[RMDB]
Source: RMDB library M2PK50, as collected in RNAgym.
This 177-nucleotide RNA was probed chemically with 2A3 and DMS.
RNA sequence: GGGAACGACUCGAGUAGAGUCGAAAACUCUGACGCUUCGGCGUCAGAGAAACCUCUAAGCAGUUUGGCGAGGACGACGCUGCGGAGCGCGUUUGCCAACAAAAACGCAUAGAUUCGUCUAUGCGAAGGUUAAUAUGCUCUUCGGAGCAUAUUAACCAAAAGAAACAACAACAACAAC
Reactivity to 2A3 in 0.01 (KOAc 150mM, MgCl2 10mM, bicine 150mM(pH8.5), 24C), signal-to-noise 2, nucleotides 027 to 126: c000u010c000u000g000a000c000g040c010u060u060c230g130g000c000g000u010c000a010g020a000g000a000a010a000c000c000u020c060u100a060a180g050c090a070g060u040u100u090g020g000c010g000a110g060g050a080c030g000a080c030g030c000u130g100c100g160g150a020g000c020g000c000g010u000u020u090g000c010c000a020a000c020a030a060a000a000a030c000g000c010a000u000a000g030a020u010u070c160g070u000c120u020a000u000g000c010g000a040a010
Reactivity to DMS in 0.01 (KOAc 150mM, MgCl2 10mM, bicine 150mM(pH8.5), 24C), signal-to-noise 2, nucleotides 027 to 126: c000u000c000u000g000a010c020g050c020u030u010c270g020g010c010g020u020c000a000g000a010g010a040a110a070c060c010u000c120u020a090a120g010c150a050g020u020u000u030g000g000c020g020a110g000g000a040c030g040a140c010g020c000u000g000c270g010g000a020g000c030g000c020g000u000u000u020g000c010c010a020a020c060a040a030a060a100a210c010g020c000a000u000a000g000a050u000u000c200g010u000c000u000a000u000g000c000g010a040a020
About this RNA:
For 2A3 the reverse transcriptase was SuperScript II with manganese. The RNA was probed in 150 mM KOAc, 10 mM MgCl2 and 150 mM bicine (pH 8.5) at 24 C. For DMS the reverse transcriptase was MarathonRT. For 2A3, 2,581 sequencing reads were counted.